[RMDB]
RNA sequence: GGGAACGACUCGAGUAGAGUCGAAAAUUGGAGCGCAACCCUGCAUAUCCAUGCUGCUUGACAACCAGUGUCGCCCAUGAUGACACUCCCGAAAGCGGGACGUGACACUCUCGAAAGCGGGACGUGAUCGUAGUAUCAUCUUCGGAUGAUACUACGAAAAAGAAACAACAACAACAAC
Reactivity to 2A3 in 0.01 (KOAc 150mM, MgCl2 10mM, bicine 150mM(pH8.5), 24C), signal-to-noise 2, nucleotides 027 to 126: u080u030g010g010a040g000c030g000c010a050a090c020c030c020u010g020c030a040u010a100u210c050c020a020u030g000c010u020g000c000u070u060g030a030c020a060a060c010c030a060g030u000g070u120c070g080c010c020c020a050u170g050a050u100g020a030c000a010c020u000c030c000c010g020a080a040a000g140c000g000g000g000a000c010g000u010g010a000c010a020c030u010c000u020c020g050a100a060a040g060c000g000g000g010a030c100g030u010g030a050
Reactivity to DMS in 0.01 (KOAc 150mM, MgCl2 10mM, bicine 150mM(pH8.5), 24C), signal-to-noise 3, nucleotides 027 to 126: u000u000g010g000a100g020c110g000c040a060a080c120c090c100u000g000c000a050u000a110u000c030c050a080u020g000c040u000g020c070u000u010g010a090c100a110a170c130c040a060g000u000g010u000c100g030c010c020c020a080u010g010a080u020g010a130c020a030c040u000c000c000c000g020a040a070a130g000c000g010g000g000a020c020g020u000g010a140c150a100c220u000c000u000c020g010a060a130a170g000c010g010g010g000a030c210g010u000g000a100